[RMDB]
RNA sequence: GGGAACGACUCGAGUAGAGUCGAAAAAGUUUAGAUUUCGAUCUAAACUAGACCACUAAGAGGAUGACGAGUGACUAGGACGCAUCUAGUAGAAUGCGCCCAGCUGUGAGCAGUUCGCUGCUCACAACAAGAAAAGUGAUUUCGAUCACUUUUCUUGAAAAGAAACAACAACAACAAC
Reactivity to 2A3 in 0.01 (KOAc 150mM, MgCl2 10mM, bicine 150mM(pH8.5), 24C), signal-to-noise 8, nucleotides 027 to 126: a000g010u010u010u000a010g000a020u080u060u080c240g050a020u000c000u000a000a000a000c000u000a020g040a040c010c020a030c060u070a100a050g040a030g160g020a070u110g050a050c080g030a030g100u100g040a060c040u090a110g000g020a010c000g000c010a010u010c020u030a050g040u020a040g090a170a030u020g010c000g010c010c010c000a030g020c080u050g000u000g000a000g000c010a000g010u040u110c200g030c080u000g000c000u000c000a000c000a000a010
Reactivity to DMS in 0.01 (KOAc 150mM, MgCl2 10mM, bicine 150mM(pH8.5), 24C), signal-to-noise 5, nucleotides 027 to 126: a040g000u000u000u000a000g000a020u000u000u020c180g010a020u000c000u000a000a000a010c000u000a060g000a200c020c010a130c140u010a080a090g010a080g000g000a060u000g010a070c080g000a080g010u000g010a110c110u000a100g030g010a030c020g010c010a010u000c020u000a130g000u000a100g010a070a030u000g010c010g010c010c000c010a080g010c160u000g010u000g000a000g010c000a010g020u000u010c240g020c010u000g000c000u000c000a000c000a030a110
About this RNA: Structure probing data (2A3 and DMS) for a 177-nucleotide construct. The 2A3 profile rests on 22,103 reads. The reactions ran in a buffer of 150 mM KOAc, 10 mM MgCl2 and 150 mM bicine (pH 8.5), at 24 C. In probing experiments dimethyl sulfate is read out at A N1 and C N3, which are open when not base-paired. Reactivities are given for positions 27 through 126. 2A3 adducts were read by reverse transcription with SuperScript II with manganese.